[RMDB]
RNA sequence: GGGAACGACUCGAGUAGAGUCGAAAAAUCAGAGGGCGCUAUCAUGCAAACUAGGAUUGUCUGCUCAUGCACAGAACCAACUACCGAUAACUAACAGUGCAUGAAGGUUAGUUAUUCCAUAUCAAUUAAAACUCGUAAUUCUUCGGAAUUACGAGAACUCAAGACUUCCGUUCGCGGAAGUCUUGAGAAAAGAAACAACAACAACAAC
Reactivity to 2A3 in 0.01 (KOAc 150mM, MgCl2 10mM, bicine 150mM(pH8.5), 24C), signal-to-noise 2, nucleotides 027 to 156: a010u080c060a040g010a040g050g020g030c030g010c040u140a140u300c090a110u300g030c020a050a040a060c070u040a020g040g030a050u070u020g000u020c000u030g020c020u010c000a000u000g000c000a020c000a010g040a120a110c070c010a090a050c100u170a120c060c130g040a010u000a000a000c000u000a000a000c010a010g070u020g060c000a000u030g000a010a020g100g000u000u000a000g000u000u000a000u050u000c050c020a060u100a040u280c060a090a060u160u160a040a060a010a110c000u010c000g000u000a000a000u000u000c010u010u030c250g110g030a010a010u000u000a010c000g000a000g000a000a020

An RNA of 207 nucleotides, treated with 2A3 and read out base by base. For 2A3 the reverse transcriptase was SuperScript II with manganese. The 2A3 profile rests on 684 reads. Reactivities are given for positions 27 through 156.